[RMDB]
RNA sequence: GGGAACGACUCGAGUAGAGUCGAAAAGAAAGUCGGCUUGGCUGCGAAGCGUCUUCGGACGGGCCAAAUGCGACAGUCGCCGACGAAUGUCCAAGAUGCUGUUAGGCCCGUUUAAGCAUCGGACUAAGGGCGUUACGGUGUUCGCAUUGUGGCGCCCAAAAGAAACAACAACAACAAC
Reactivity to DMS in 0.01 (KOAc 150mM, MgCl2 10mM, bicine 150mM(pH8.5), 24C), signal-to-noise 9, nucleotides 027 to 126: g020a110a080a130g000u000c000g010g010c010u040u030g020g000c000u000g010c090g010a110a150g010c060g010u000c040u000u040c130g010g000a020c020g000g000g010c100c090a080a130a090u040g010c040g000a110c030a030g020u010c020g010c000c010g010a030c020g010a080a060u030g000u000c000c000a100a130g010a010u000g010c000u000g010u020u020a100g000g000c000c000c000g010u020u010u020a120a040g000c010a010u000c000g000g000a020c020u020a110a150
Reactivity to 2A3 in 0.01 (KOAc 150mM, MgCl2 10mM, bicine 150mM(pH8.5), 24C), signal-to-noise 9, nucleotides 027 to 126: g120a020a070a000g020u010c010g000g040c080u210u300g020g000c010u020g010c030g050a070a020g080c020g070u050c060u100u100c130g080g010a010c000g010g020g010c040c030a060a140a100u270g030c030g030a030c020a000g010u020c040g000c000c000g010a010c010g010a040a030u100g000u000c010c000a040a100g000a000u000g000c020u020g050u200u110a060g020g030c000c000c000g020u040u050u020a020a000g000c000a000u010c010g000g000a010c010u020a080a130